Chemical mapping of a 177-nucleotide RNA with DMS and 2A3.
Values cover nucleotides 27 to 126.
The data come from the RNA Mapping Database (RMDB), library TTRDES.
RNA sequence: GGGAACGACUCGAGUAGAGUCGAAAAAAAAAAGAUAUGGAGACGGAAACACGCCGUCACUAUAACCGUCGGAAACGACGGUUACGAAUGACGGAACUACGUGCACUCCGUCUCCUAAGUCAAAAAACUAUUGGUUAAAGUUCGCUUUAACCAAUAGAAAAGAAACAACAACAACAAC
Reactivity to DMS in 0.01 (KOAc 150mM, MgCl2 10mM, bicine 150mM(pH8.5), 24C), signal-to-noise 4, nucleotides 027 to 126: a010a040a080a060a100a110g000a000u000a020u010g000g000a020g020a020c000g000g000a030a060a140c010a000c000g020c000c000g000u000c000a010c120u010a170u000a000a000c000c010g000u010c000g020g000a010a010a040c010g010a010c000g010g000u000u000a000c030g000a030a010u000g000a010c010g000g000a090a020c170u010a300c030g010u000g020c120a160c170u000c000c000g000u000c000u010c000c000u000a000a060g000u010c010a000a060a070a100a070a110
Reactivity to 2A3 in 0.01 (KOAc 150mM, MgCl2 10mM, bicine 150mM(pH8.5), 24C), signal-to-noise 3, nucleotides 027 to 126: a010a000a030a000a000a000g020a020u040a010u050g000g000a010g000a000c000g010g040a040a200a020c010a010c010g000c000c000g000u000c000a010c000u000a000u010a010a000c000c000g000u000c000g010g000a010a000a000c000g010a000c020g000g000u000u000a000c000g040a300a300u020g000a000c010g010g040a030a010c090u200a040c130g010u010g020c030a020c060u010c000c000g000u000c000u000c000c000u000a000a000g000u000c000a000a030a010a060a100a180